[RMDB]
Chemical mapping of a 177-nucleotide RNA with 2A3 and DMS. The DMS profile rests on 13,715 reads. 2A3 adducts were read by reverse transcription with SuperScript II with manganese. The 2A3 profile rests on 10,175 reads.

RNA sequence: GGGAACGACUCGAGUAGAGUCGAAAACUUUUCGGCAGUACAUGAGGGAACUUCCGAAGAAUGCACCUCAGAAGCUGAAUUUUCGGGAGAUGCGUCAGGGGUUGAUUGCCCUAGGACGGCACUGCGACCACGUGAGUAUAUUCGUAUACUCACGUGGAAAAGAAACAACAACAACAAC
Reactivity to 2A3 in 0.01 (KOAc 150mM, MgCl2 10mM, bicine 150mM(pH8.5), 24C), signal-to-noise 9, nucleotides 027 to 126: c000u060u040u060u070c020g060g000c000a010g040u100a050c040a200u100g060a100g010g050g030a020a020c000u010u000c020c020g030a040a010g040a030a020u120g040c060a060c020c040u120c050a060g040a140a030g000c040u030g070a100a090u070u050u040u050c010g020g020g030a030g010a050u100g030c000g010u010c010a030g000g040g020g030u030u060g170a210u120u260g030c000c000c000u060a070g090g050a000c020g010g030c010a010c020u050g010c000g020a020
Reactivity to DMS in 0.01 (KOAc 150mM, MgCl2 10mM, bicine 150mM(pH8.5), 24C), signal-to-noise 6, nucleotides 027 to 126: c060u020u000u010u000c020g010g020c000a050g020u020a090c130a180u010g000a020g000g000g010a080a100c060u000u010c020c190g040a100a120g010a020a030u000g010c300a140c010c010u000c050a050g000a150a140g000c030u010g010a060a070u020u010u010u010c000g010g000g000a040g010a060u010g000c010g020u010c010a200g000g000g000g000u000u010g020a130u060u040g000c000c020c000u000a040g000g010a020c010g020g000c030a010c010u010g010c020g020a240